[RMDB]
Background
The data come from the RNA Mapping Database (RMDB), library OK1LIB. Chemical mapping of a 177-nucleotide RNA with 2A3 and DMS. Values cover nucleotides 27 to 126. The reactions ran in a buffer of 150 mM KOAc, 10 mM MgCl2 and 150 mM bicine (pH 8.5), at 24 C.
RNA sequence: GGGAACGACUCGAGUAGAGUCGAAAAGGCAGGAAUAGAAUGGGCCGAAUCUAGGGUCUCACUGCAGGCCAGAUGCUAUUUUUGUUUGGCGCACGGCCUGGUGGAUGAUCCGGCUGUGUUCUAAGCGCAAUAUUAUUUUAUUCGUAAAAUAAUAUUGAAAAGAAACAACAACAACAAC
Reactivity to 2A3 in 0.01 (KOAc 150mM, MgCl2 10mM, bicine 150mM(pH8.5), 24C), signal-to-noise 5, nucleotides 027 to 126: g070g000c040a020g040g090a090a060u040a040g040a030a020u040g020g010g000c000c000g000a010a020u040c040u070a050g080g020g030u010c030u020c030a030c040u130g020c020a000g000g030c000c010a010g030a060u050g000c010u030a090u070u100u030u070u130g170u080u050u070g020g000c000g000c010a010c010g000g000c000c000u010g000g000u020g000g020a140u100g000a000u010c010c000g000g010c010u080g080u040g010u200u030c010u040a080a050g050c030g000
Reactivity to DMS in 0.01 (KOAc 150mM, MgCl2 10mM, bicine 150mM(pH8.5), 24C), signal-to-noise 7, nucleotides 027 to 126: g000g010c030a100g000g000a090a090u020a020g000a050a030u020g010g000g010c010c000g010a070a040u010c060u020a110g010g010g010u000c030u010c020a040c020u010g010c040a030g020g010c000c000a090g000a160u020g010c020u010a010u010u020u030u040u040g010u020u020u010g010g000c030g020c090a160c110g000g000c000c000u000g010g010u010g000g000a070u020g010a020u000c020c010g000g000c020u000g020u020g010u000u000c010u000a050a140g010c110g010